[RMDB]
RNA sequence: GGGAACGACUCGAGUAGAGUCGAAAACAAACGGCUCAUGUAUCGAUAAACGCACAUCAGCACUUCAUUGAGGAAAACUGUGUAGUAUUUAAGAAAUUCGUUAAGGCUGAUAUAAUCUAUUUCCUCCGCCGGUCCAACGUUUCGACGUUGGACCGGCAAAAGAAACAACAACAACAAC
Reactivity to 2A3 in 0.01 (KOAc 150mM, MgCl2 10mM, bicine 150mM(pH8.5), 24C), signal-to-noise 1, nucleotides 027 to 126: c000a080a000a000c000g000g000c010u000c000a000u010g110u220a220u000c000g100a060u040a070a130a000c060g000c000a070c000a030u060c000a000g020c000a010c040u130u000c140a000u000u150g010a040g200g030a010a000a290a000c000u070g000u000g000u080a040g030u100a300u200u240u210a100a000g000a000a000a010u140u030c000g000u000u060a200a000g000g000c000u000g030a000u000a000u000a040a110u110c290u200a140u000u000u000c000c030u070c060c060